[RMDB]
RNA sequence: GGGAACGACUCGAGUAGAGUCGAAAAAGUCAAUGGGGAAUGAUUCUCAAUUUGAACUAUAUCAAACCUACUCAGUUGAGUAUUGUCCACACUUCUAAGCUAGACUUUUGAGCCAUUCUGGCUUGGACCAUCAAUACGGGUUCGCCCGUAUUGAUGGAAAAGAAACAACAACAACAAC
Reactivity to DMS in 0.01 (KOAc 150mM, MgCl2 10mM, bicine 150mM(pH8.5), 24C), signal-to-noise 3, nucleotides 027 to 126: a040g010u010c070a030a050u000g000g000g000g010a060a150u020g000a140u010u000c000u000c020a050a080u000u010u010g010a090a060c060u000a050u000a120u000c120a060a110a100c110c040u000a020c020u000c000a070g020u000u020g000a080g000u000a030u000u010g000u000c010c010a080c190a070c150u000u000c000u000a010a010g000c020u010a040g010a020c230u000u000u000u010g010a120g010c110c060a080u000u010c030u000g040g000c020u000u000g000g020a140
Reactivity to 2A3 in 0.01 (KOAc 150mM, MgCl2 10mM, bicine 150mM(pH8.5), 24C), signal-to-noise 4, nucleotides 027 to 126: a000g010u000c010a000a030u050g010g000g000g040a040a110u190g090a270u270u030c020u000c000a040a100u100u070u060g020a050a030c000u020a020u020a030u300c060a070a050a090c010c010u010a010c010u010c020a050g000u070u070g040a030g070u080a070u170u170g060u000c010c000a060c000a030c100u040u060c000u020a000a030g010c010u010a010g010a060c030u110u090u090u260g080a030g040c040c010a040u050u020c020u020g000g000c000u010u010g000g010a020
Source: RMDB library OK2TST, as collected in RNAgym.
Structure probing data (DMS and 2A3) for a 177-nucleotide construct.
For DMS the reverse transcriptase was MarathonRT.
DMS (dimethyl sulfate) methylates the pairing face of unpaired adenines and cytosines.
Reactivities are rounded to 0.1 and cut off at 0 and 3.
The DMS profile rests on 2,106 reads.
The reactions ran in a buffer of 150 mM KOAc, 10 mM MgCl2 and 150 mM bicine (pH 8.5), at 24 C.